RNA sequence: GGGAACGACUCGAGUAGAGUCGAAAAAUGAGGGACUUGUCAUCCUCUGGUACUACGAUGAAUCGGACCGUAUCACUCACCGCACGGUGAACGGCGAACCGGCAGAGCAGUGGCAGUAUGAUGGCCACGGUCCAAAGUUAUUCGUAACUUUGGACCGAAAAGAAACAACAACAACAAC
Reactivity to 2A3 in 0.01 (KOAc 150mM, MgCl2 10mM, bicine 150mM(pH8.5), 24C), signal-to-noise 5, nucleotides 027 to 126: a000u170g010a110g020g030g050a040c050u080u100g010u070c010a020u020c010c010u000c010u030g120g170u030a030c020u000a020c020g050a050u060g090a080a130u190c000g010g030a020c020c000g020u080a240u270c030a030c050u040c010a110c030c080g060c040a070c120g000g000u000g020a010a010c020g010g000c020g000a040a050c000c000g030g000c020a010g000a010g020c010a010g000u000g060g000c000a010g020u130a080u140g050a020u030g030g000c010c030a030
Reactivity to DMS in 0.01 (KOAc 150mM, MgCl2 10mM, bicine 150mM(pH8.5), 24C), signal-to-noise 6, nucleotides 027 to 126: a060u010g010a090g010g010g000a090c120u010u000g020u010c040a100u000c020c070u000c020u010g010g000u000a040c030u000a050c040g000a160u000g010a050a060u000c020g010g020a190c020c020g000u010a130u000c040a020c060u000c080a080c060c140g010c200a070c180g010g000u000g000a030a050c020g010g010c120g000a090a070c030c010g010g010c040a030g000a150g010c060a040g040u000g010g000c000a040g000u010a060u000g000a050u010g010g010c020c220a100
Structure probing data (2A3 and DMS) for a 177-nucleotide construct. For 2A3 the reverse transcriptase was SuperScript II with manganese. The DMS profile rests on 7,732 reads. High DMS reactivity at an A or C suggests that its Watson-Crick edge is free. Source: RMDB library OK2TST, as collected in RNAgym. The RNA was probed in 150 mM KOAc, 10 mM MgCl2 and 150 mM bicine (pH 8.5) at 24 C.